[RMDB]
RNA sequence: GGGAACGACUCGAGUAGAGUCGAAAAGUCAGUUUUCGGAACACGGAAUCUUUGUCGACGAUGGGACUGGCGAGGGAACGAUGAAGGGGAUCUUCGAUGUCUACGAAUACAUCACGAUGCACAAGUACGCAUAUCUCUUCAAGCCUUCUCUCGCAGACCCAUGGGCAUAGUUCGCUAUGCCCAUGGGAAAAGAAACAACAACAACAAC
Reactivity to 2A3 in 0.01 (KOAc 150mM, MgCl2 10mM, bicine 150mM(pH8.5), 24C), signal-to-noise 4, nucleotides 027 to 156: g040u020c050a050g000u040u010u010u090c040g040g040a170a060c060a020c120g020g070a090a070u050c060u110u110u120g110u100c080g010a070c050g050a090u140g030g030g000a060c070u090g110g030c010g000a010g000g010g000a040a030c060g020a020u050g010a010a010g000g050g020g040a070u020c100u100u100c120g010a000u020g000u050c020u080a140c100g090a170a070u090a090c020a000u010c020a010c080g070a050u040g030c030a040c000a090a200g100u230a120c110g010c010a020u010a080u040c000u000c000u000u000c010a000a090g040c000c000u010u000c000u000c000u000c000g000c000a000g020a020
Reactivity to DMS in 0.01 (KOAc 150mM, MgCl2 10mM, bicine 150mM(pH8.5), 24C), signal-to-noise 1, nucleotides 027 to 156: g030u010c030a010g060u000u000u000u000c050g020g030a050a090c120a150c050g000g000a090a100u010c010u000u000u030g030u000c030g000a070c080g000a150u000g000g030g060a190c060u020g040g050c000g010a020g000g000g010a020a010c070g010a210u020g030a030a070g000g000g010g010a120u030c130u000u000c150g030a070u000g010u000c150u040a140c120g000a180a120u000a050c020a000u000c050a120c120g000a140u000g020c010a060c010a060a300g000u050a000c110g010c010a110u000a140u000c010u000c000u000u000c020a050a120g040c070c050u000u030c010u000c000u000c010g000c010a020g010a090
This 207-nucleotide RNA was probed chemically with 2A3 and DMS. The data come from the RNA Mapping Database (RMDB), library OK3TST. Conditions: 150 mM KOAc, 10 mM MgCl2 and 150 mM bicine (pH 8.5), 24 C. The DMS profile rests on 1,671 reads.